[RMDB]
RNA sequence: GGGAACGACUCGAGUAGAGUCGAAAAGAUAUGGAAUGGAAGAGCCGAUAAGAAUGAUGUCGGAAACGACAUAUUCUUUUGACGGCUCCCAUUCCUAAGUCAAAAGUGUGGAGUUCGCUCCACACAAUCUAGGUACAGGGUUCGCCCUGUACCUAGAAAAAGAAACAACAACAACAAC
Reactivity to DMS in 0.01 (KOAc 150mM, MgCl2 10mM, bicine 150mM(pH8.5), 24C), signal-to-noise 1, nucleotides 027 to 126: g000a010u000a070u010g010g000a000a000u010g000g010a170a200g000a000g010c010c000g010a110u010a020a000g010a000a010u010g020a020u010g000u000c000g030g000a030a010a050c000g010a010c000a020u000a050u000u000c000u000u000u000u000g020a170c080g010g000c020u010c000c000c010a000u000u000c000c000u010a020a080g000u000c000a090a120a100a170g000u000g010u000g000g000a030g030u000u020c300g010c000u000c010c030a000c010a020c000a070a070
Reactivity to 2A3 in 0.01 (KOAc 150mM, MgCl2 10mM, bicine 150mM(pH8.5), 24C), signal-to-noise 3, nucleotides 027 to 126: g000a000u030a020u110g000g020a000a000u000g040g130a300a300g000a300g070c010c030g180a220u220a300a000g030a020a010u130g290a050u000g150u000c010g010g000a010a010a010c000g000a000c000a000u020a010u000u000c000u070u070u140u280g300a290c040g000g000c030u000c010c010c000a000u000u020c000c000u000a000a000g000u000c020a020a000a140a250g000u000g000u000g030g000a000g000u020u250c260g230c150u000c000c000a000c000a010c000a000a010
Structure probing data (DMS and 2A3) for a 177-nucleotide construct. The reactions ran in a buffer of 150 mM KOAc, 10 mM MgCl2 and 150 mM bicine (pH 8.5), at 24 C. The DMS profile rests on 1,660 reads. It was measured as part of the RMDB library TTRDES.